[RMDB]
RNA sequence: GGGAACGACUCGAGUAGAGUCGAAAAACCUCAGUCUUCGGACUGAGGUGAGCGGAGCAUGGUGGCCGUGCGAACUCCUCCUUGGUGACAAGGGCCCACGGGGUGCGGCACGCUUCGGCGUGCCGAAGAUCGGGGAAAUAUUCGUAUUUCCCCGAUCAAAAGAAACAACAACAACAAC
Reactivity to 2A3 in 0.01 (KOAc 150mM, MgCl2 10mM, bicine 150mM(pH8.5), 24C), signal-to-noise 1, nucleotides 027 to 126: a000c000c000u000c000a000g000u000c000u000u110c180g160g000a000c010u000g000a000g030g000u000g000a020g000c060g070g070a040g020c070a060u090g040g080u080g100g020c050c000g010u040g050c020g060a060a040c030u010c010c000u000c000c010u030u040g020g040u070g060a010c000a040a010g000g000g030c020c020c000a000c020g040g000g000g020u060g010c010g010g000c000a010c000g000c050u020u040c180g090g010c010g000u020g000c050c010g010a020a010
Reactivity to DMS in 0.01 (KOAc 150mM, MgCl2 10mM, bicine 150mM(pH8.5), 24C), signal-to-noise 2, nucleotides 027 to 126: a040c000c000u000c010a010g000u000c000u000u010c150g040g000a020c010u000g010a010g000g010u000g000a040g010c060g000g000a180g020c060a050u000g010g020u000g010g030c040c040g010u010g000c060g000a110a100c060u000c030c150u000c020c020u010u000g010g010u020g010a200c030a030a040g010g000g010c030c020c020a090c120g010g000g000g030u000g000c020g000g060c040a010c000g010c020u010u000c160g030g030c000g020u000g010c000c010g000a030a060
Structure probing data (2A3 and DMS) for a 177-nucleotide construct.
The RNA was probed in 150 mM KOAc, 10 mM MgCl2 and 150 mM bicine (pH 8.5) at 24 C.
For DMS, 3,117 sequencing reads were counted.
The 2A3 profile rests on 2,582 reads.
Source: RMDB library M2PK50, as collected in RNAgym.